[RMDB]
RNA sequence: GGGAACGACUCGAGUAGAGUCGAAAAGGUAUUGCUUGUUGCCUUAGUGUGCUUAAGUCCUCGAAGAAUAACUGCUGACCUUAUUCACUGGCUGUGUGGACUUUCUGGCACAGUCAGUCACCAGGUUGUGCACGAACAUAUUCGUAUGUUCGUGCACAAAAGAAACAACAACAACAAC
Reactivity to 2A3 in 0.01 (KOAc 150mM, MgCl2 10mM, bicine 150mM(pH8.5), 24C), signal-to-noise 2, nucleotides 027 to 126: g140g020u110a150u160u300g080c090u100u230g050u060u030g100c020c000u030u020a000g050u050g020u040g100c000u170u160a070a090g050u090c000c000u030c020g020a040a060g060a130a040u080a070a010c020u050g030c080u040g010a010c000c000u070u040a150u100u050c040a000c050u000g000g000c000u000g040u010g010u050g030g020a060c010u030u100u050c030u070g050g000c000a000c010a000g000u000c000a000g000u040c020a050c050c010a040g010g090u070u030
Source: RMDB libraries RFM100 and RFMREP, as collected in RNAgym. This 177-nucleotide RNA was probed chemically with 2A3. Conditions: 150 mM KOAc, 10 mM MgCl2 and 150 mM bicine (pH 8.5), 24 C.